Chemical mapping of a 177-nucleotide RNA with 2A3. 2A3 is a SHAPE reagent: it acylates the 2'-hydroxyl of flexible nucleotides of all four kinds. 2A3 adducts were read by reverse transcription with SuperScript II with manganese. It was measured as part of the RMDB library OK1LIB.
RNA sequence: GGGAACGACUCGAGUAGAGUCGAAAAUCAAUAUAAUGUUGAGCACCCUUUUCUUCGAUGGUGCUGACGCUACCAGUGCACUUCACGUACGCACAACUCUUGAAGAUCGCUUGGGUGAUGCACCUGCGCCGAUGAUGCACUUCGGUGCAUCAUCGGCAAAAGAAACAACAACAACAAC
Reactivity to 2A3 in 0.01 (KOAc 150mM, MgCl2 10mM, bicine 150mM(pH8.5), 24C), signal-to-noise 1, nucleotides 027 to 126: u070c000a000a000u020a020u090a230a180u300g020u020u000g110a000g060c100a220c000c000c000u000u000u000u000c130u130u100c120g110a090u100g000g000u000g000c000u000g020a070c000g000c060u060a160c000c020a000g000u000g050c070a000c010u010u030c060a060c200g140u260a040c090g110c080a080c020a120a130c020u000c020u020u000g020a000a000g060a090u050c000g000c000u040u080g070g000g000u000g090a030u020g020c000a050c000c050u090g040c020

Record summary
The reactions ran in a buffer of 150 mM KOAc, 10 mM MgCl2 and 150 mM bicine (pH 8.5), at 24 C.